[RMDB]
RNA sequence: GGGAACGACUCGAGUAGAGUCGAAAAGAUAUGGAUCAUCAAGGGAGUCCCAUGGUCGGAAACGACCAUGCCGGACUUUGAUCUUGGAUGAUCCUAAGUCAAACGUAGUAACUUCGGUUACUACGAACACUACUCAGUAGUUCGCUACUGAGUAGUGAAAAGAAACAACAACAACAAC
Reactivity to 2A3 in 0.01 (KOAc 150mM, MgCl2 10mM, bicine 150mM(pH8.5), 24C), signal-to-noise 4, nucleotides 027 to 126: g010a000u010a010u070g000g000a000u000c000a000u000c000a010a000g010g010g000a020g000u000c000c000c010a000u000g000g010u010c000g000g000a030a000a000c000g010a000c000c010a000u010g000c030c080g000g000a000c000u300u090u020g000a000u000c000u010u030g160g040a020u030g000a000u000c010c000u000a010a000g010u000c000a090a060a120c020g010u000a000g000u000a010a010c010u060u080c300g160g000u000u000a000c000u000a000c000g010a050a000
Reactivity to DMS in 0.01 (KOAc 150mM, MgCl2 10mM, bicine 150mM(pH8.5), 24C), signal-to-noise 8, nucleotides 027 to 126: g000a020u000a020u010g000g010a010u000c000a010u000c000a010a010g000g000g000a010g010u000c000c010c010a000u000g000g020u000c000g030g010a010a010a030c010g010a010c000c000a000u000g000c300c260g010g000a000c000u000u000u010g000a000u010c000u000u000g020g010a030u000g000a010u000c000c000u000a000a060g000u000c010a110a130a300c030g010u000a000g010u010a000a010c000u000u010c280g030g000u000u000a010c000u000a000c000g000a080a160
Structure probing data (2A3 and DMS) for a 177-nucleotide construct. It was measured as part of the RMDB library TTRDES. The RNA was probed in 150 mM KOAc, 10 mM MgCl2 and 150 mM bicine (pH 8.5) at 24 C. For DMS the reverse transcriptase was MarathonRT. 2A3 adducts were read by reverse transcription with SuperScript II with manganese. In probing experiments dimethyl sulfate is read out at A N1 and C N3, which are open when not base-paired. The DMS profile rests on 17,268 reads.